[RMDB]
RNA sequence: GGGAACGACUCGAGUAGAGUCGAAAAGAUAUGGAGGUUUGGGAGUUCCGUCGAGCAUCGAUCUCCUUUCUUCGGAAACGAAGAAAGGAGGGAGCUCGAUAGGAACGAAGAACAAACCUCCUAAGUCCCGAUGUAAUAAGUUCGCUUAUUACAUCGGAAAAGAAACAACAACAACAAC
Reactivity to DMS in 0.01 (KOAc 150mM, MgCl2 10mM, bicine 150mM(pH8.5), 24C), signal-to-noise 4, nucleotides 027 to 126: g000a070u010a300u010g000g010a000g010g000u000u000u000g010g000g020a230g010u000u000c000c000g030u000c000g000a010g030c000a300u000c230g010a070u010c000u000c000c000u000u000u000c000u000u000c010g000g000a120a100a210c010g010a010a000g000a010a010a020g010g000a010g010g000g000a020g020c000u010c000g000a010u000a030g070g000a000a000c000g000a090a110g020a150a210c000a010a010a010c000c010u000c000c000u000a020a110g000u000c030
Reactivity to 2A3 in 0.01 (KOAc 150mM, MgCl2 10mM, bicine 150mM(pH8.5), 24C), signal-to-noise 3, nucleotides 027 to 126: g040a040u100a070u240g010g010a010g020g000u030u030u020g040g030g030a120g010u020u010c010c000g010u010c000g000a000g020c030a240u300c050g160a200u040c020u000c010c000u000u000u010c000u010u000c000g060g050a070a110a080c010g000a010a010g010a000a020a010g010g000a000g000g020g000a010g000c010u000c020g000a010u040a120g000g000a000a000c000g000a160a000g030a040a000c000a010a010a000c000c000u000c010c000u010a050a010g030u030c000